[RMDB]
RNA sequence: GGGAACGACUCGAGUAGAGUCGAAAACCAUGACCGGUAACAACGCCGCCAACAUAAGCUAUAGCCAGUGGGUUAACGUCAUGGAGCAGACCAUAGGUAUUCUGUGGAUGUACCUCUUACCUGUGACACUAGGGCCAUGAUUCGUCAUGGCCCUAGUAAAAGAAACAACAACAACAAC
Reactivity to DMS in 0.01 (KOAc 150mM, MgCl2 10mM, bicine 150mM(pH8.5), 24C), signal-to-noise 2, nucleotides 027 to 126: c000c010a100u000g000a100c060c040g040g020u000a010a140c090a090a120c170g070c050c020g020c040c030a050a090c150a100u000a080a220g020c100u000a100u000a100g030c040c020a100g040u000g020g000g000u000u010a030a070c120g010u020c000a020u000g000g010a150g000c040a070g000a130c060c020a080u000a040g020g000u000a110u000u020c030u000g030u000g020g000a230u010g000u000a160c100c020u000c080u020u000a050c020c010u000g000u020g000a120c280
Reactivity to 2A3 in 0.01 (KOAc 150mM, MgCl2 10mM, bicine 150mM(pH8.5), 24C), signal-to-noise 1, nucleotides 027 to 126: c000c030a010u020g040a060c030c020g010g020u060a090a040c050a030a060c160g000c010c010g010c030c000a070a000c010a130u130a050a020g020c000u090a040u080a230g010c020c000a040g020u010g050g020g050u030u060a050a010c030g020u030c010a020u020g010g020a010g000c040a020g030a200c000c000a010u010a020g080g000u100a110u280u270c080u040g050u010g030g000a010u050g020u110a120c010c000u080c000u010u010a040c030c060u070g060u090g020a000c030